RNA sequence: GGGAACGACUCGAGUAGAGUCGAAAAGAAAGUCGUUCCUUUUGGAAUGGCCUAGUUGCCCAGAAGCCUCCCCUCAAAAUCGUUUCAGUCCAAAAUUGAUUCGGCGGCCCUGUCAUGAGGCCGAAACGCAGUGAUGACAUUUCGAUGUCAUCACUGCAAAAGAAACAACAACAACAAC
Reactivity to DMS in 0.01 (KOAc 150mM, MgCl2 10mM, bicine 150mM(pH8.5), 24C), signal-to-noise 1, nucleotides 027 to 126: g020a200a180a020g000u000c000g010u000u000c000c040u000u030u010u000g000g030a030a060u000g000g000c000c020u000a130g000u000u010g000c000c000c000a040g010a100a080g000c010c070u000c050c020c050c020u020c030a100a060a120a070u040c030g010u010u000u000c030a040g020u000c090c040a010a060a040a050u000u040g000a100u030u000c060g000g000c010g000g000c000c010c040u000g040u020c240a060u070g000a080g020g010c000c030g010a000a170a110c170
Reactivity to 2A3 in 0.01 (KOAc 150mM, MgCl2 10mM, bicine 150mM(pH8.5), 24C), signal-to-noise 2, nucleotides 027 to 126: g100a020a110a000g030u020c000g000u000u000c010c000u020u090u070u200g000g030a060a060u050g000g010c000c010u040a020g080u100u050g070c000c010c000a010g030a020a000g000c020c000u000c000c000c000c020u030c030a100a100a000a080u040c040g020u000u010u020c040a040g070u010c020c000a060a030a100a080u050u080g060a040u060u050c010g000g000c010g000g020c010c000c000u210g120u170c060a170u030g090a090g010g070c000c000g000a000a020a000c040

Chemical mapping of a 177-nucleotide RNA with DMS and 2A3. In probing experiments dimethyl sulfate is read out at A N1 and C N3, which are open when not base-paired. The RNA was probed in 150 mM KOAc, 10 mM MgCl2 and 150 mM bicine (pH 8.5) at 24 C. The DMS profile rests on 1,703 reads. DMS adducts were read by reverse transcription with MarathonRT.